[RMDB]
RNA sequence: GGGAACGACUCGAGUAGAGUCGAAAAGAUAUGGAGCAAAGGGAGUCGUGAAGGGCGAAGAACAUGAGAGAUCGGAAACGAUCUCUCAUGGGAGCCUGGAGGCGACGAAGAACUUUGCUCCUAAGUCCCUAAUGCUGGAGUUCGCUCCAGCAUUAGGAAAAGAAACAACAACAACAAC
Reactivity to DMS in 0.01 (KOAc 150mM, MgCl2 10mM, bicine 150mM(pH8.5), 24C), signal-to-noise 1, nucleotides 027 to 126: g030a120u000a300u040g000g000a020g020c020a030a030a000g030g020g000a050g010u010c000g040u000g030a300a240g000g010g000c000g000a080a140g000a160a080c010a000u000g000a000g000a010g010a000u000c000g010g010a070a050a200c010g000a000u000c000u010c000u000c010a000u000g000g000g000a220g000c010c000u010g000g000a300g000g000c010g010a000c000g000a050a100g000a130a150c000u000u020u000g010c000u000c000c000u000a000a020g000u010c040